Description: The record gives the reactivity of an RNA of 207 nucleotides to DMS and 2A3. It was measured as part of the RMDB library M2RFPK. For DMS the reverse transcriptase was MarathonRT. Conditions: 150 mM KOAc, 10 mM MgCl2 and 150 mM bicine (pH 8.5), 24 C.
[RMDB]
RNA sequence: GGGAACGACUCGAGUAGAGUCGAAAAUUCGCGAAUGCCUGUGGAUCUACAUUUGUUGCGGGUUCGAGACCCGUCAGAGCCCGGCUCUGUAGCUCAAUGGUAGAGCGGUGUAUUCACAUAAACUUGUAAAAGACACGUGCCUUCGGGCACGUGUCAAGGUAGAAUUCAAGUUCGCUUGAAUUCUACCAAAAGAAACAACAACAACAAC
Reactivity to DMS in 0.01 (KOAc 150mM, MgCl2 10mM, bicine 150mM(pH8.5), 24C), signal-to-noise 2, nucleotides 027 to 156: u000u010c040g000c010g010a090a030u000g000c010c040u000g050u000g050g010a060u010c000u000a020c010a040u000u000u020g020u000u000g000c000g010g000g020u000u010c050g000a300g030a120c030c020c030g000u000c080a090g020a100g030c020c060c070g040g000c020u000c040u000g000u010a040g000c040u000c040a040a080u000g010g000u000a040g010a090g040c020g010g020u000g010u010a050u010u000c050a040c030a080u000a070a100a090c070u010u020g000u010a110a140a130a190g000a030c010a020c000g040u020g000c000c000u000u000c300g030g020g030c000a000c050g010u000g000u000c000a020a010
Reactivity to 2A3 in 0.01 (KOAc 150mM, MgCl2 10mM, bicine 150mM(pH8.5), 24C), signal-to-noise 3, nucleotides 027 to 156: u080u060c010g000c010g060a160a080u110g030c020c030u110g000u050g120g000a040u020c010u070a010c010a040u050u040u150g050u030u070g040c000g000g010g020u010u010c000g020a030g030a090c010c010c020g030u040c020a010g000a000g000c040c220c130g120g000c000u000c010u020g020u010a010g000c000u000c000a030a100u180g230g010u120a020g010a000g000c020g020g000u020g010u000a040u040u040c030a030c000a070u140a100a170a110c060u100u140g070u190a020a110a030a030g000a000c000a000c000g000u000g000c000c050u020u060c120g030g000g000c040a000c000g000u000g000u000c000a000a000